RNA sequence: GGGAACGACUCGAGUAGAGUCGAAAAGAUAUGGAACAUCCCACAUCCCGUAACAGCAACAGCGUACGGGACUCGGAAACGAGUCUUACGACAUGCUGGAGAAGGGAUGUGGGAUGUUCCUAAGUCAUCUAAGCACUCAGUUCGCUGAGUGCUUAGAAAAAGAAACAACAACAACAAC
Reactivity to DMS in 0.01 (KOAc 150mM, MgCl2 10mM, bicine 150mM(pH8.5), 24C), signal-to-noise 2, nucleotides 027 to 126: g010a010u010a300u000g000g000a030a050c020a000u000c000c000c000a010c020a010u000c010c000c000g010u010a090a300c000a020g000c010a050a090c300a180g000c030g010u000a030c300g020g030g010a000c000u010c000g000g000a140a070a300c000g010a020g020u000c000u000u010a000c000g020a110c060a300u000g000c000u000g000g000a070g050a090a240g000g000g010a000u000g010u010g000g000g010a010u000g010u000u000c000c000u000a000a030g040u000c040a130